[RMDB]
RNA sequence: GGGAACGACUCGAGUAGAGUCGAAAACUCCCCGUUCCUGGAGAAGGGAGACUCGGGAACGCCUAGCAUCUGAGGGACAAAGCCGCCCCCGGGCGCUCCCCUCGGAGAUCCACUGGGUGGGUUCACAAUCGUAUUGGCUUCGGCCAAUACAAAAGAAACAACAACAACAAC
Reactivity to 2A3 in 0.01 (KOAc 150mM, MgCl2 10mM, bicine 150mM(pH8.5), 24C), signal-to-noise 9, nucleotides 027 to 129: c050u040c000c000c000c000g010u020u000c000c010u050g080g030a050g010a080a080g040g020g000a040g020a010c010u010c030g000g000g010a040a020c020g030c010c010u060a050g010c020a090u000c010u020g010a010g020g010g010a030c060a050a090a000g060c130c060g020c000c030c000c030c050g060g010g000c020g000c010u000c000c000c000c000u000c010g010g000a040g010a030u060c040c010a040c050u060g000g040g050u060g000g040g000u060u050c060a060c040a090a100u120c110
Reactivity to DMS in 0.01 (KOAc 150mM, MgCl2 10mM, bicine 150mM(pH8.5), 24C), signal-to-noise 7, nucleotides 027 to 129: c170u020c020c000c000c010g020u040u010c030c030u010g010g010a090g060a040a030g010g010g000a090g020a040c080u020c080g000g010g010a070a070c110g000c040c030u040a060g020c070a140u030c000u010g000a040g020g030g010a100c030a080a110a040g040c100c000g020c030c000c020c130c250g010g000g010c020g010c050u030c070c010c000c010u030c020g000g000a030g010a060u000c100c100a100c050u030g000g020g030u030g030g040g030u050u040c060a060c050a180a000u080c130
Source: RMDB library 15KLIB, as collected in RNAgym. Structure probing data (2A3 and DMS) for a 170-nucleotide construct. For DMS the reverse transcriptase was MarathonRT. For DMS, 24,405 sequencing reads were counted. DMS (dimethyl sulfate) methylates the pairing face of unpaired adenines and cytosines.